[RMDB]
RNA sequence: GGGAACGACUCGAGUAGAGUCGAAAACUGAAAUGCCCACGUUUCAGGACUGGGCGUCAAAAGAGUGGGGAACUGGUUUUGCCUGCGCCUCGGGGCAAAACCGGAAUAAUGAGGCUACCGAAGCGGUUAUCCUGUCGCUGGGAGAACCGCUGAGGGACAUAUAGUUUACCUUCGGGUAAACUAUAUGAAAAGAAACAACAACAACAAC
Reactivity to DMS in 0.01 (KOAc 150mM, MgCl2 10mM, bicine 150mM(pH8.5), 24C), signal-to-noise 3, nucleotides 027 to 156: c020u020g030a020a020a030u000g000c000c020c030a030c030g010u000u000u000c060a060g010g020a260c090u010g020g020g010c030g030u000c060a080a100a100a130g000a070g020u010g010g010g020g010a100a120c040u010g000g010u000u000u000u000g010c000c000u000g010c040g020c000c020u000c010g040g000g000g010c000a010a000a020a010c000c020g000g000a090a090u010a060a080u000g020a060g030g040c020u010a130c020c000g000a300a050g020c020g030g020u010u000a070u000c010c000u000g000u000c280g020c250u010g030g020g000a070g000a020a020c000c010g030c010u000g000a300g000g000g020a090
Reactivity to 2A3 in 0.01 (KOAc 150mM, MgCl2 10mM, bicine 150mM(pH8.5), 24C), signal-to-noise 8, nucleotides 027 to 156: c010u000g000a010a010a000u010g000c000c010c000a010c010g000u000u010u010c030a050g030g040a060c080u180g060g170g090c080g040u070c060a100a110a090a040g190a030g010u040g000g000g000g000a020a020c000u000g000g000u000u000u000u000g010c000c000u030g010c030g000c020c000u000c000g000g000g000g000c000a010a000a000a000c000c000g000g020a030a050u170a050a120u160g000a000g010g000c010u020a030c000c000g000a010a000g000c000g010g010u000u030a010u030c000c000u090g190u300c140g080c280u270g000g010g000a010g000a010a010c000c000g000c000u000g000a000g000g000g000a000